[RMDB]
Background: This 177-nucleotide RNA was probed chemically with 2A3 and DMS. For DMS, 2,575 sequencing reads were counted. Source: RMDB library OK1LIB, as collected in RNAgym.
RNA sequence: GGGAACGACUCGAGUAGAGUCGAAAACUCAUCCGAACGAAGUGGCUGAAGCCUAACAACGAGGCGUUCGCUGAAUGCUAUCCGGGCCGUGGCAAGAAGGUCCCGUUCUGGGUCGCCCGGUCCCGACCAGAAGCGUGUAGUUCGCUACACGCUUCUGAAAAGAAACAACAACAACAAC
Reactivity to 2A3 in 0.01 (KOAc 150mM, MgCl2 10mM, bicine 150mM(pH8.5), 24C), signal-to-noise 6, nucleotides 027 to 126: c030u030c040a100u050c030c030g040a040a040c050g050a110a040g100u120g100g000c060u190g110a210a040g030c000c010u050a070a100c130a070a050c070g070a020g010g040c020g050u010u020c040g010c080u080g070a080a050u110g040c050u110a030u170c080c010g000g000g000c000c010g060u230g020g010c080a020a130g080a100a050g300g040u110c000c000c020g080u220u070c100u300g050g000g000u040c040g020c000c000c010g000g010u070c070c010c000g020a030c010
Reactivity to DMS in 0.01 (KOAc 150mM, MgCl2 10mM, bicine 150mM(pH8.5), 24C), signal-to-noise 2, nucleotides 027 to 126: c040u000c010a090u010c050c030g000a090a120c020g000a080a110g030u000g020g000c000u000g000a150a090g000c000c020u000a110a120c170a060a160c240g050a030g040g020c000g030u000u000c020g010c090u000g000a110a090u000g000c030u000a080u040c010c100g000g000g000c030c120g020u050g030g000c030a050a080g050a080a110g020g040u000c040c000c000g010u000u050c120u010g010g030g040u000c050g020c000c020c040g030g000u010c000c000c020g000a040c230